[RMDB]
RNA sequence: GGGAACGACUCGAGUAGAGUCGAAAAGAUUAUGUGGGAGAUGCGCCCAGUCGUGUCACUGGAAACAGAAUUGCGAGUCGCUCGCGCUAGCGAUAUUGAUGUGUACAGUAGCGUACACUGUGCUACUUUAAGGUAUUAUGACGAUACCACGUCAAAAGAUCAGGGUGGAGUUCGCUCCACCCUGAUCAAAAGAAACAACAACAACAAC
Reactivity to 2A3 in 0.01 (KOAc 150mM, MgCl2 10mM, bicine 150mM(pH8.5), 24C), signal-to-noise 1, nucleotides 027 to 156: g000a030u120u110a100u220g020u100g000g050g000a070g030a100u050g040c070g110c020c050c030a000g050u040c100g040u050g000u130c010a010c040u070g080g100a000a070a240c030a030g110a080a030u150u080g020c000g030a020g050u000c000g020c010u030c010g090c000g000c070u030a000g010c010g040a030u040a070u150u030g050a010u070g030u000g000u020a000c030a090g000u060a000g120c050g020u030a080c140a040c100u030g020u040g060c000u030a060c030u030u210u000a130a000g110g000u000a020u100u020a060u170g040a000c030g000a000u010a080c000c000a030c060g010u020c010a000a030a030a030